[RMDB]
RNA sequence: GGGAACGACUCGAGUAGAGUCGAAAACUUAUCCGGUUUUAACGCUGUUUUAUUGGCGCCAAGGUUUACGGAUAAACAACUAAUAAUUAAACCUUUUGUGUGCGAAACGUGGUUGUUUAACGUACUCACUGCCCCCAGGGAUUCGUCCCUGGGGGAAACUGUUCCUCGUAUUCGUACGAGGAACAGUAAAAGAAACAACAACAACAAC
Reactivity to 2A3 in 0.01 (KOAc 150mM, MgCl2 10mM, bicine 150mM(pH8.5), 24C), signal-to-noise 2, nucleotides 027 to 156: c020u030u000a000u000c020c030g010g000u030u000u000u010a000a020c000g000c010u020g150u230u210u080u130a120u140u270g010g010c010g030c010c010a010a000g010g000u000u000u000a000c000g010g000a030u010a020a040a010c040a030a020c070u220a090a210u140a210a040u110u160a050a000a030c000c000u030u060u090u160g030u030g000u020g010c120g030a160a120a000c030g010u060g020g000u100u020g010u030u020u040a100a000c000g010u020a020c040u010c050a010c030u080g020c000c000c000c000c000a000g020g010g020a020u010u030c130g030u050c030c020c000u000g000g000g010g000g030a000a010